About this RNA: Structure probing data (2A3 and DMS) for a 177-nucleotide construct. In probing experiments dimethyl sulfate is read out at A N1 and C N3, which are open when not base-paired. It was measured as part of the RMDB library M2PK50.
[RMDB]
RNA sequence: GGGAACGACUCGAGUAGAGUCGAAAACUGUCGUUCUUCGGAACGACAGAAAGAACGCGUGGGUCACGCAAGGAGGAGCGUGUGGGACGCGACAAACCCAAUAAAGCGUUCGGUUCGCCGAACGCAAGAUGAAGUGAGACUUCGGUCUCACUUCAUCAAAAGAAACAACAACAACAAC
Reactivity to 2A3 in 0.01 (KOAc 150mM, MgCl2 10mM, bicine 150mM(pH8.5), 24C), signal-to-noise 3, nucleotides 027 to 126: c000u000g010u010c000g000u010u020c020u030u020c190g080g010a010a010c000g000a000c010a000g000a000a000a000g040a100a020c010g010c010g010u030g010g220g080u060c000a000c010g000c060a070a070g170g060a060g040g050a090g050c000g000u010g000u030g010g120g060a000c010g000c000g000a000c030a020a080a020c000c010c010a010a030u170a090a030a000g000c010g000u010u000c020g000g020u040u030c210g000c030c000g010a000a000c000g000c000a010a000
Reactivity to DMS in 0.01 (KOAc 150mM, MgCl2 10mM, bicine 150mM(pH8.5), 24C), signal-to-noise 2, nucleotides 027 to 126: c030u000g040u000c000g010u000u000c010u000u010c230g010g020a000a000c010g000a000c010a010g010a020a050a130g000a100a110c030g000c000g010u000g000g010g030u010c000a000c000g020c030a050a050g000g000a300g000g000a090g010c000g030u000g000u000g000g020g000a040c020g000c020g000a050c090a080a070a140c000c010c010a120a060u000a070a130a140g000c000g010u000u000c010g000g010u000u030c180g020c000c000g000a010a000c000g030c000a000a020